Chemical mapping of a 177-nucleotide RNA with 2A3 and DMS.
Values cover nucleotides 27 to 126.
For DMS the reverse transcriptase was MarathonRT.
[RMDB]
RNA sequence: GGGAACGACUCGAGUAGAGUCGAAAACGUACGAUCUCUAGACAUCUAGCAUGAUCGUGAUCUAGCUAGUAGAGUAUCAUGGGAUCUGUCAGCUAGCAGUCUAGACAUGCAUGGCUAGCCAUGGAUCCCACGUGGCUCCGUUCGCGGAGCCACGUGGAAAAGAAACAACAACAACAAC
Reactivity to 2A3 in 0.01 (KOAc 150mM, MgCl2 10mM, bicine 150mM(pH8.5), 24C), signal-to-noise 1, nucleotides 027 to 126: c020g080u190a070c030g000a040u000c020u000c010u010a060g020a110c030a250u030c060u020a010g020c010a060u110g010a090u030c060g040u040g010a000u000c010u020a030g000c010u010a000g090u020a020g050a040g070u240a160u140c080a050u100g040g030g000a020u020c020u040g070u100c000a010g020c010u000a000g000c020a020g000u070c040u110a100g100a300c030a040u150g030c020a000u120g060g080c020u020a000g060c010c010a030u120g010g030a000u030c000
Reactivity to DMS in 0.01 (KOAc 150mM, MgCl2 10mM, bicine 150mM(pH8.5), 24C), signal-to-noise 1, nucleotides 027 to 126: c100g050u000a140c160g000a010u000c040u000c000u000a010g020a220c210a170u000c000u000a060g030c070a260u000g010a050u000c130g020u010g010a080u010c030u000a170g040c020u000a030g020u000a120g000a040g000u010a060u000c040a080u000g040g000g000a000u000c010u010g000u000c190a130g000c010u000a010g000c050a070g030u000c030u020a140g000a100c190a120u010g020c180a120u000g010g000c000u000a020g010c020c100a130u000g000g010a030u000c000